Chemical mapping of a 207-nucleotide RNA with 2A3. For 2A3, 616 sequencing reads were counted.

[RMDB]
RNA sequence: GGGAACGACUCGAGUAGAGUCGAAAAGCCAACUAGGCUUGAUAAUAGUGACAAUCGGCAUCAACCAACCCCACCUAGCAUUUCUCCACAUCUGCAUGCACGCUUUCUUCAAAGCAAUACUAUUCAUAUGCUCCGGAUCCAUUAUCCACAGCCUCAACGUAAUUCUCACCUUCGGGUGAGAAUUACGAAAAGAAACAACAACAACAAC
Reactivity to 2A3 in 0.01 (KOAc 150mM, MgCl2 10mM, bicine 150mM(pH8.5), 24C), signal-to-noise 1, nucleotides 027 to 156: g040c000c080a040a060c150u120a030g040g050c020u050u030g050a020u030a300a040u040a080g110u040g080a030c060a070a090u130c100g000g010c040a010u040c040a080a100c050c070a000a060c010c000c000c000a020c010c000u000a020g050c030a000u080u120u050c020u000c010c020a020c000a060u040c070u100g050c030a040u060g000c050a000c060g000c010u000u050u050c020u120u040c060a030a030a020g060c050a090a000u060a100c110u090a090u130u150c030a080u030a020u140g000c010u000c000c010g020g000a000u000c010c000a020u030u060a030u010c000c010a020c030a070g000c040c000u070c030a030a000